[RMDB]
This 177-nucleotide RNA was probed chemically with DMS and 2A3. The 2A3 profile rests on 1,894 reads. The RNA was probed in 150 mM KOAc, 10 mM MgCl2 and 150 mM bicine (pH 8.5) at 24 C. It was measured as part of the RMDB library OK2TRN.

RNA sequence: GGGAACGACUCGAGUAGAGUCGAAAAAGACAACACCAUUUAUAUGUACAGCUCUAACUUUAAAUGGCAUAGCCAUUGAUGGUGAUGAACUCUACAUUUAUUAUAGAAAAGAUAACCAAAUUGUCAACCCUAAAACGUAGUUCGCUACGUUUUAGGGAAAAGAAACAACAACAACAAC
Reactivity to DMS in 0.01 (KOAc 150mM, MgCl2 10mM, bicine 150mM(pH8.5), 24C), signal-to-noise 2, nucleotides 027 to 126: a100g010a030c040a000a050c110a170c120c040a050u010u000u010a040u010a020u000g030u000a010c130a030g000c010u000c000u000a170a000c000u000u030u000a140a000a000u000g000g000c020a160u010a180g050c000c000a000u010u000g010a090u000g000g010u000g000a140u010g000a000a010c030u000c130u010a010c000a010u000u000u000a030u020u000a090u000a100g000a070a040a040a110g000a050u000a070a170c050c110a040a040a160u010u000g020u010c030a120a190
Reactivity to 2A3 in 0.01 (KOAc 150mM, MgCl2 10mM, bicine 150mM(pH8.5), 24C), signal-to-noise 2, nucleotides 027 to 126: a000g030a030c040a060a000c020a050c060c010a030u050u140u080a140u030a020u060g040u030a000c020a010g000c000u000c000u020a030a030c010u050u070u080a000a030a000u020g000g040c100a280u230a100g000c000c020a020u030u000g000a050u110g010g030u000g020a030u190g000a020a010c010u020c040u010a020c010a000u110u120u110a090u170u080a120u130a030g070a030a210a030a010g020a020u060a040a070c060c050a030a080a100u050u030g020u010c030a050a140